[RMDB]
RNA sequence: GGGAACGACUCGAGUAGAGUCGAAAACGUUUGUCCUCCUUCGGAUGCCCAGGUCGGACCACGGGGAGGUGGAGAUGCCAUGCCGACCCGAAGAGGAAGAAGAGGACAUGGACGCGAACCGUGAGUGCUUAAGAGUAUUGUUCGCAAUACUCUUAAGAAAAGAAACAACAACAACAAC
Reactivity to DMS in 0.01 (KOAc 150mM, MgCl2 10mM, bicine 150mM(pH8.5), 24C), signal-to-noise 6, nucleotides 027 to 126: c060g010u000u010u000g010u000c000c010u000c070c050u000u010c010g000g000a230u040g010c030c030c020a090g010g010u010c010g010g000a130c040c040a060c050g010g020g010g010a140g010g020u000g010g000a160g010a100u010g000c040c060a100u010g020c000c000g010a070c010c000c020g000a080a070g010a090g010g020a300a100g010a050a060g010a040g010g000a020c030a050u010g010g010a040c030g010c040g000a080a150c020c020g010u010g010a110g010u010g010
Reactivity to 2A3 in 0.01 (KOAc 150mM, MgCl2 10mM, bicine 150mM(pH8.5), 24C), signal-to-noise 3, nucleotides 027 to 126: c000g010u000u080u070g020u000c020c010u020c010c060u030u020c020g110g010a060u110g050c010c010c010a020g040g000u010c020g000g060a150c040c000a060c060g140g040g030g030a170g040g070u030g020g040a200g020a080u210g130c020c010a060u120g010c000c020g010a010c000c000c040g040a080a040g020a030g090g010a010a020g010a030a010g010a020g000g010a010c000a010u070g110g030a020c030g010c020g040a050a030c020c000g070u100g150a110g070u180g050

This 177-nucleotide RNA was probed chemically with DMS and 2A3. Source: RMDB library VIROID, as collected in RNAgym. 2A3 adducts were read by reverse transcription with SuperScript II with manganese.